An RNA of 177 nucleotides, treated with DMS and 2A3 and read out base by base.
The DMS profile rests on 5,467 reads.
DMS adducts were read by reverse transcription with MarathonRT.
The reactions ran in a buffer of 150 mM KOAc, 10 mM MgCl2 and 150 mM bicine (pH 8.5), at 24 C.
The data come from the RNA Mapping Database (RMDB), library OK1LIB.
RNA sequence: GGGAACGACUCGAGUAGAGUCGAAAAGUGCAUCCGCAUCUGGGCCGUGAGGUCUUCGGCCGCGGUGUCCAGCGCAUGUAGAUAGUUCUGGCGUUGGUAGAAGUAGUCGCGCACCUCUUCGUGCGGCGCUAAGACUCUCGUUCGCGAGAGUCUUAGCAAAAGAAACAACAACAACAAC
Reactivity to DMS in 0.01 (KOAc 150mM, MgCl2 10mM, bicine 150mM(pH8.5), 24C), signal-to-noise 3, nucleotides 027 to 126: g000u020g000c080a060u020c060c020g010c010a070u040c120u040g000g000g000c040c020g020u010g020a120g010g010u020c070u010u010c100g000g000c070c060g000c010g000g010u000g000u010c010c010a030g000c110g010c040a100u040g000u000a050g010a110u000a080g020u040u000c020u000g020g010c050g020u000u000g000g000u030a060g000a100a050g000u000a050g010u010c000g010c080g000c090a070c050c040u010c100u010u040c100g000u000g000c000g000g000c060
Reactivity to 2A3 in 0.01 (KOAc 150mM, MgCl2 10mM, bicine 150mM(pH8.5), 24C), signal-to-noise 3, nucleotides 027 to 126: g090u070g000c030a060u070c040c010g020c010a060u050c130u160g040g030g010c000c020g040u070g090a140g000g080u070c000u140u100c090g020g000c000c010g000c020g020g060u070g100u050c010c000a010g000c020g040c010a020u050g070u090a030g010a250u080a060g120u140u040c040u050g100g010c000g020u030u020g030g010u110a050g020a110a010g040u180a000g050u040c000g000c000g000c050a060c030c060u110c060u110u140c050g020u030g000c010g000g000c020